[RMDB]
RNA sequence: GGGAACGACUCGAGUAGAGUCGAAAAAUACAAGGGGAGGUUUCGGCCAAAUGUUGUAUGCAGAAAGCGUGAGGAAGGUAGCACUUAGCCACUCACGAGUAGCGGUUCGGCAGUAGUGCUAAAAUGAGACAGUACGAAAAGUUCGCUUUUCGUACAAGUAUAGAUGUCCCUUCGGGGACAUCUAUACAAAAGAAACAACAACAACAAC
Reactivity to 2A3 in 0.01 (KOAc 150mM, MgCl2 10mM, bicine 150mM(pH8.5), 24C), signal-to-noise 2, nucleotides 027 to 156: a000u150a010c060a060a060g030g010g000g000a030g030g030u010u050u170c050g080g000c020c030a070a110a060u070g010u070u020g010u030a080u080g000c010a010g130a110a040a050g050c010g020u040g000a000g020g050a120a100g000g030u060a000g000c010a000c050u090u100a020g010c000c020a040c030u010c020a060c030g030a010g000u070a010g030c050g020g050u080u070c040g040g000c020a030g060u100a010g000u040g000c000u020a040a070a030a090u100g020a040g010a060c080a060g000u000a000c000g000a000a000a000a000g000u030u090c090g040c060u010u000u000u010c000g000u000a000c000a010a000
Reactivity to DMS in 0.01 (KOAc 150mM, MgCl2 10mM, bicine 150mM(pH8.5), 24C), signal-to-noise 1, nucleotides 027 to 156: a110u000a060c030a040a050g020g000g050g000a090g030g030u000u010u000c080g030g000c060c010a060a040a100u000g010u070u000g010u000a080u000g010c000a140g050a110a020a070g000c040g010u010g000a130g010g020a080a040g000g010u000a070g030c070a060c030u000u000a240g050c030c000a090c010u000c000a080c000g000a070g010u000a100g010c040g030g030u000u010c050g050g000c010a060g030u000a020g030u010g020c010u000a050a070a080a100u000g000a140g020a060c080a130g000u000a010c030g000a000a010a010a000g010u000u000c300g020c010u000u000u000u000c000g020u030a000c000a000a070